[RMDB]
RNA sequence: GGGAACGACUCGAGUAGAGUCGAAAAUGUAGGCACUUUAUUUCUCCACUUUCAAGAGCUUGGGCUUGGCCCAAAUCUUAGACUGUCCAAUUCUGCCUCUAUUACCAAUUUAAAUCUAUGGCUUGAACUUAUGUUUUAGCUUCGGCUAAAACAUAAGAAAAGAAACAACAACAACAAC
Reactivity to DMS in 0.01 (KOAc 150mM, MgCl2 10mM, bicine 150mM(pH8.5), 24C), signal-to-noise 1, nucleotides 027 to 126: u010g020u010a000g000g000c010a040c080u000u010u000a100u020u000u010c030u000c080c070a160c030u000u020u010c030a050a040g000a040g000c230u000u000g010g000g020c010u030u000g050g030c000c000c000a000a010a060u000c020u000u000a080g010a070c060u000g010u020c090c070a030a120u000u000c070u000g010c030c020u000c040u000a070u000u020a120c030c020a060a060u000u010u000a050a070a060u010c080u010a080u020g010g010c040u000u000g000a060a180
Reactivity to 2A3 in 0.01 (KOAc 150mM, MgCl2 10mM, bicine 150mM(pH8.5), 24C), signal-to-noise 2, nucleotides 027 to 126: u150g000u080a060g000g000c020a020c040u130u160u150a100u040u300u020c090u020c000c000a040c020u010u050u060c040a030a020g000a060g120c040u030u020g030g000g000c080u180u190g230g060c000c020c000a010a010a010u010c000u000u010a040g000a020c000u030g060u110c050c020a030a120u130u030c020u060g000c000c030u070c000u050a100u190u080a070c020c010a090a040u050u160u200a170a130a050u090c070u120a170u130g060g070c020u040u050g030a100a040
Chemical mapping of a 177-nucleotide RNA with DMS and 2A3. The 2A3 profile rests on 1,286 reads. For DMS the reverse transcriptase was MarathonRT. 2A3 is a SHAPE reagent: it acylates the 2'-hydroxyl of flexible nucleotides of all four kinds. The reactions ran in a buffer of 150 mM KOAc, 10 mM MgCl2 and 150 mM bicine (pH 8.5), at 24 C. Reactivities are given for positions 27 through 126.